RNA sequence: GGGAACGACUCGAGUAGAGUCGAAAAAAGCUGUAUGGUAAGUGACGCAAGCUGAAAGAAGAGCGCUGAACAGCAGAAAAAAUACCGAUAGAAACAAUCUGCGUCCGAUGACCCCUAUCGAAUUUAAAUCGAGUCAUUCUUUCGAGAAUGACUCGAUAAAAGAAACAACAACAACAAC
Reactivity to DMS in 0.01 (KOAc 150mM, MgCl2 10mM, bicine 150mM(pH8.5), 24C), signal-to-noise 1, nucleotides 027 to 126: a050a120g020c010u000g020u000a020u050g020g000u000a110a020g000u050g000a040c000g000c000a000a050g000c070u030g010a080a130a240g060a200a110g020a100g000c050g030c000u000g000a050a070c130a000g020c020a060g020a000a030a050a210a190a060u010a140c070c010g000a010u050a000g000a090a020a090c050a070a060u000c040u000g020c020g000u030c000c020g010a000u000g000a170c000c020c020c030u000a080u000c010g000a080a120u010u010u030a020a030
Reactivity to 2A3 in 0.01 (KOAc 150mM, MgCl2 10mM, bicine 150mM(pH8.5), 24C), signal-to-noise 2, nucleotides 027 to 126: a000a000g080c090u070g060u140a120u110g000g090u050a100a040g030u010g010a000c000g000c050a030a030g000c000u070g050a190a020a040g100a070a090g050a080g030c070g000c120u010g050a000a030c000a010g000c000a020g260a020a140a000a000a020a010u230a050c110c000g020a020u020a070g010a030a050a000c000a110a000u010c030u080g000c020g020u020c020c050g000a000u100g010a040c000c060c000c000u000a000u020c050g030a040a080u110u200u180a120a100